[RMDB]
Structure probing data (2A3 and DMS) for a 177-nucleotide construct.

RNA sequence: GGGAACGACUCGAGUAGAGUCGAAAACGUUAAUGACAUUUGUAUGUUUGAGAAUAAAACCACUUUGCCUACUAAUAUAGCUUUUGAACUCUAUGCUAAGCGUGCUGUACGCUCGCAUCCCGAUUUCACAUCCUUUCGUCUUCGGACGAAAGGAUGUAAAAGAAACAACAACAACAAC
Reactivity to 2A3 in 0.01 (KOAc 150mM, MgCl2 10mM, bicine 150mM(pH8.5), 24C), signal-to-noise 2, nucleotides 027 to 126: c010g020u050u080a100a020u090g050a030c060a090u090u050u100g100u040a110u060g050u000u060u100g110a090g040a080a020u090a100a050a020a020c010c000a030c040u080u050u000g000c000c020u010a060c010u030a140a090u070a050u070a080g010c000u000u000u020u070g030a070a030c010u010c010u120a020u060g010c000u070a070a000g050c000g000u020g000c040u140g070u040a010c020g000c010u000c000g000c000a000u000c000c000c010g020a050u020u050u070c010
Reactivity to DMS in 0.01 (KOAc 150mM, MgCl2 10mM, bicine 150mM(pH8.5), 24C), signal-to-noise 2, nucleotides 027 to 126: c100g000u010u000a070a050u000g010a020c040a060u010u010u000g030u000a050u000g000u000u000u020g000a150g030a080a100u000a070a080a070a120c030c100a100c050u000u000u000g020c040c030u020a040c120u000a040a050u000a080u000a050g030c070u010u010u000u010g000a120a030c070u000c070u000a060u000g010c060u000a100a110g000c050g040u000g020c130u000g040u020a040c080g020c030u000c120g030c070a110u000c000c000c020g010a130u000u000u000c100

For 2A3 the reverse transcriptase was SuperScript II with manganese. The data come from the RNA Mapping Database (RMDB), library 15KREP. The RNA was probed in 150 mM KOAc, 10 mM MgCl2 and 150 mM bicine (pH 8.5) at 24 C.